[RMDB]
An RNA of 177 nucleotides, treated with 2A3 and DMS and read out base by base.
RNA sequence: GGGAACGACUCGAGUAGAGUCGAAAAUUUACGAUUAUCGCGUUCGCCAUUUUCAUGGGUUUAAAAGCGAUCAAUACCUUGAAGCGUAAGGAAGAGGAAGCGCCUAAAGCCCCUGCAGCGCCAACCACCCCAUCAUUACGUUCGCGUAAUGAUGGGGAAAAGAAACAACAACAACAAC
Reactivity to 2A3 in 0.01 (KOAc 150mM, MgCl2 10mM, bicine 150mM(pH8.5), 24C), signal-to-noise 1, nucleotides 027 to 126: u080u060u120a060c020g050a040u100u100a030u110c040g030c010g010u060u240c110g170c080c000a090u100u090u000u060c050a090u170g020g000g000u090u120u120a020a090a050a000g040c000g040a000u000c020a090a030u020a120c000c020u060u100g040a100a010g080c020g040u030a000a070g070g010a020a080g030a020g050g000a090a040g000c000g000c070c000u150a200a150a070g020c030c010c000c000u000g010c020a000g000c040g070c080c010a030a000c050c000a050
Reactivity to DMS in 0.01 (KOAc 150mM, MgCl2 10mM, bicine 150mM(pH8.5), 24C), signal-to-noise 2, nucleotides 027 to 126: u010u000u000a030c070g030a100u020u010a060u000c040g010c000g020u010u000c180g000c000c050a050u000u030u010u000c180a030u020g020g000g010u010u000u000a090a040a140a120g020c020g000a020u010c110a040a140u000a120c050c020u010u010g010a130a160g010c060g010u010a040a030g010g010a070a080g000a090g010g010a260a090g000c020g070c030c050u010a110a130a090g030c050c010c020c120u000g010c090a070g020c010g020c020c020a090a090c060c100a260
Reactivities are given for positions 27 through 126. The data come from the RNA Mapping Database (RMDB), library OK2TST. 2A3 adducts were read by reverse transcription with SuperScript II with manganese.